[RMDB]
RNA sequence: GGGAACGACUCGAGUAGAGUCGAAAACUUGGGCAGUGAACCAUUUGGGCGCCCCUGGCAGCCGGGCGAUGUCGUUGGCUGUAUGAUCGACCUCACAGAGAACACCAUUAUCUUCACCCUCAAUGGCACAAUUCGAGUAGUUCGCUACUCGAAUUGUAAAAGAAACAACAACAACAAC
Reactivity to DMS in 0.01 (KOAc 150mM, MgCl2 10mM, bicine 150mM(pH8.5), 24C), signal-to-noise 2, nucleotides 027 to 126: c030u000u000g010g000g010c060a080g030u000g010a070a100c030c030a130u010u010u010g020g020g020c040g000c040c020c050c050u010g010g020c040a080g010c060c050g020g010g010c020g000a090u010g010u000c040g020u010u010g010g000c020u000g010u000a050u000g020a100u000c030g010a150c070c050u000c060a100c060a100g000a090g010a080a060c090a050c050c010a040u010u000a040u000c030u010u000c080a090c020c000c020u000c090a050a080u020g000g010c190
Reactivity to 2A3 in 0.01 (KOAc 150mM, MgCl2 10mM, bicine 150mM(pH8.5), 24C), signal-to-noise 2, nucleotides 027 to 126: c020u050u080g020g010g000c020a090g040u060g130a020a060c020c000a100u140u050u140g150g010g000c020g020c010c000c030c010u060g050g020c040a000g000c000c070g050g000g000c040g050a130u140g150u100c050g020u080u020g000g070c030u000g030u040a080u150g060a050u020c040g020a000c040c010u070c040a030c070a000g040a000g000a090a010c020a020c020c030a050u060u050a040u100c030u070u130c040a110c020c000c000u050c060a060a120u110g080g000c080

Record summary:
The record gives the reactivity of an RNA of 177 nucleotides to DMS and 2A3. The RNA was probed in 150 mM KOAc, 10 mM MgCl2 and 150 mM bicine (pH 8.5) at 24 C. For DMS the reverse transcriptase was MarathonRT.